[RMDB]
RNA sequence: GGGAACGACUCGAGUAGAGUCGAAAAGAUAUGGAAAAGGCGGGACCGCCGGUGAAAUACACCUGAACUACGCAAACACAUCGGAAACGAUGUGUGCGCAGGUGGAGGUCCCGCCUUUUCCUAAGUCGUAUGUAUAGGUGUUCGCACCUAUACAUACAAAAGAAACAACAACAACAAC
Reactivity to DMS in 0.01 (KOAc 150mM, MgCl2 10mM, bicine 150mM(pH8.5), 24C), signal-to-noise 3, nucleotides 027 to 126: g010a120u010a300u010g010g000a030a000a000a040g000g020c020g010g020g000a010c010c010g010c090c080g030g020u010g000a090a130a120u000a300c040a010c000c000u000g010a120a110c010u010a150c070g020c030a070a140a120c000a000c000a000u000c000g000g000a100a090a200c030g000a000u000g020u000g000u000g000c230g000c000a030g000g010u000g010g010a060g010g010u000c000c000c010g000c000c000u000u000u010u000c000c000u000a040a060g010u000c090